[RMDB]
Structure probing data (2A3 and DMS) for a 177-nucleotide construct.

RNA sequence: GGGAACGACUCGAGUAGAGUCGAAAAGAGUUUCUGUUCGCAGAAACUCAGUGCGUAGCUGCGUUAAAAUAAUACCUACGCUUAAUAAAUUUUUUUAACGCAAAAGUGGUUAUUUCGAUAACCACAAAGAUUAUAUAUCGUUCGCGAUAUAUAAUCUAAAAGAAACAACAACAACAAC
Reactivity to 2A3 in 0.01 (KOAc 150mM, MgCl2 10mM, bicine 150mM(pH8.5), 24C), signal-to-noise 2, nucleotides 027 to 126: g000a000g000u010u020u000c010u000g040u020u080c260g020c060a000g000a000a000a010c000u000c010a000g070u040g000c000g000u010a020g020c150u110g000c020g000u000u000a050a030a030a050u150a080a100u050a090c000c020u010a020c000g000c000u040u110a080a030u100a060a080a060u140u030u020u000u010u010u030a020a000c010g000c000a020a040a030a070g000u010g000g020u030u000a010u030u120u050c070g050a000u010a010a010c000c010a000c010a010a020
Reactivity to DMS in 0.01 (KOAc 150mM, MgCl2 10mM, bicine 150mM(pH8.5), 24C), signal-to-noise 3, nucleotides 027 to 126: g000a010g000u000u010u000c000u000g010u000u020c190g050c010a020g010a010a000a010c000u000c010a070g030u000g010c010g010u000a010g040c300u010g000c000g000u000u000a010a000a020a040u000a080a040u000a130c220c010u010a010c010g020c020u000u000a020a070u010a050a070a050u000u000u000u000u000u000u000a010a000c000g010c000a090a100a090a130g010u000g000g000u000u000a010u000u000u000c120g000a020u000a010a020c000c000a000c010a030a020

For 2A3, 3,607 sequencing reads were counted.